Conditions: 150 mM KOAc, 10 mM MgCl2 and 150 mM bicine (pH 8.5), 24 C. Chemical mapping of a 177-nucleotide RNA with DMS and 2A3. DMS adducts were read by reverse transcription with MarathonRT. For 2A3 the reverse transcriptase was SuperScript II with manganese.
[RMDB]
RNA sequence: GGGAACGACUCGAGUAGAGUCGAAAAUCAGGAGGCUGAGGUGGGAGAAUUGCUUGAGUCCAGGAGCUCGAGACUGCAGUGAGCUGUGAUUCUCACCACUGCACUCCAGCCUGGGCAACAGAGCAAGUACUGCUCUACUCUUCGGAGUAGAGCAGUAAAAAGAAACAACAACAACAAC
Reactivity to DMS in 0.01 (KOAc 150mM, MgCl2 10mM, bicine 150mM(pH8.5), 24C), signal-to-noise 2, nucleotides 027 to 126: u010c060a100g000g000a150g020g000c050u000g000a090g010g010u000g000g010g010a070g010a090a100u010u000g010c020u000u000g010a100g000u000c010c020a020g010g010a090g010c090u010c300g000a080g020a060c160u000g000c010a000g010u010g020a130g040c130u000g020u000g000a130u030u010c100u010c060a150c000c000a010c000u000g010c020a040c070u000c030c090a020g000c000c040u030g000g000g010c000a010a060c190a180g000a040g020c010a030a040g000
Reactivity to 2A3 in 0.01 (KOAc 150mM, MgCl2 10mM, bicine 150mM(pH8.5), 24C), signal-to-noise 1, nucleotides 027 to 126: u130c010a000g030g020a080g160g000c190u100g080a010g110g130u160g090g030g020a080g030a050a130u040u000g000c000u000u010g000a010g000u090c020c000a020g020g070a050g050c040u000c000g040a040g000a080c170u060g000c000a010g000u020g030a100g020c180u010g030u030g070a300u300u070c090u070c090a000c080c000a000c010u010g010c000a010c010u000c000c000a020g000c020c020u020g020g020g000c000a010a010c030a070g120a010g030c000a000a000g000